[RMDB]
RNA sequence: GGGAACGACUCGAGUAGAGUCGAAAAAUCAUCUGGCAUGAUUAAGCCAAAUGCUCUUCUUUGUGCUACUUGCCCCUUUGCUAAGGGUGAUAGCUGUUCUUCUAAUUGCAAACAUUCAGUUGCUCAGCGUAUUACGCGUGUUCGCACGCGUAAUACGAAAAGAAACAACAACAACAAC
Reactivity to DMS in 0.01 (KOAc 150mM, MgCl2 10mM, bicine 150mM(pH8.5), 24C), signal-to-noise 2, nucleotides 027 to 126: a050u010c010a010u000c080u000g000g010c020a070u000g010a190u010u010a140a120g010c020c010a020a010a030u010g000c080u000c000u000u000c060u000u000u000g030u010g000c010u000a020c220u010u010g000c030c000c000c020u000u000u020g000c110u020a180a140g010g000g020u000g040a050u000a020g020c010u000g010u000u010c020u010u000c200u020a100a100u010u000g020c020a020a080a110c100a090u010u010c100a070g000u000u000g020c040u010c140a110g000
Reactivity to 2A3 in 0.01 (KOAc 150mM, MgCl2 10mM, bicine 150mM(pH8.5), 24C), signal-to-noise 3, nucleotides 027 to 126: a010u300c020a030u000c000u020g040g000c000a060u100g030a160u290u060a090a020g030c030c000a000a040a020u030g010c020u000c000u040u020c010u020u040u070g040u020g000c010u010a030c070u020u020g000c000c000c000c000u010u050u060g000c010u040a010a010g030g000g010u030g020a020u030a010g000c030u010g050u060u000c030u050u000c020u060a090a100u130u050g010c020a040a030a060c030a120u100u200c050a000g030u030u030g030c010u040c050a030g000